[RMDB]
RNA sequence: GGGAACGACUCGAGUAGAGUCGAAAAGACACCGCGCAGAUCCCAAUGGCCGCUAAUAACGCCAAAAUAAAUGCGCGUAAAUGGCGUAAAAUAUAGACACAAUAUAAGUGAAAGCCGCCAAAGCAAAUUACCCUUAAUUAUUCGUAAUUAAGGGUAAAAAAGAAACAACAACAACAAC
Reactivity to DMS in 0.01 (KOAc 150mM, MgCl2 10mM, bicine 150mM(pH8.5), 24C), signal-to-noise 3, nucleotides 027 to 126: g040a130c100a070c230c020g040c000g040c010a080g010a070u000c010c000c020a140a210u020g020g000c050c100g030c050u000a120a050u020a100a090c030g020c010c000a050a080a060a090u010a040a120a110u000g010c020g010c000g000u010a040a080a090u000g020g030c010g020u000a040a030a080a030u020a120u010a050g010a260c010a000c030a060a100u020a110u010a110a060g000u010g000a050a170a210g010c160c110g020c020c000a040a100a130g010c120a050a050a090
Reactivity to 2A3 in 0.01 (KOAc 150mM, MgCl2 10mM, bicine 150mM(pH8.5), 24C), signal-to-noise 1, nucleotides 027 to 126: g070a000c030a030c020c070g000c000g000c000a010g030a140u030c000c000c020a010a010u090g030g000c110c030g000c110u030a010a060u080a260a050c000g010c010c000a100a000a040a000u210a010a060a030u050g010c000g000c010g010u020a030a090a090u050g020g000c010g000u040a030a070a010a030u210a000u070a070g200a030c010a000c000a100a060u190a080u090a300a040g000u010g030a100a100a070g080c100c010g000c040c020a050a010a000g040c030a070a080a020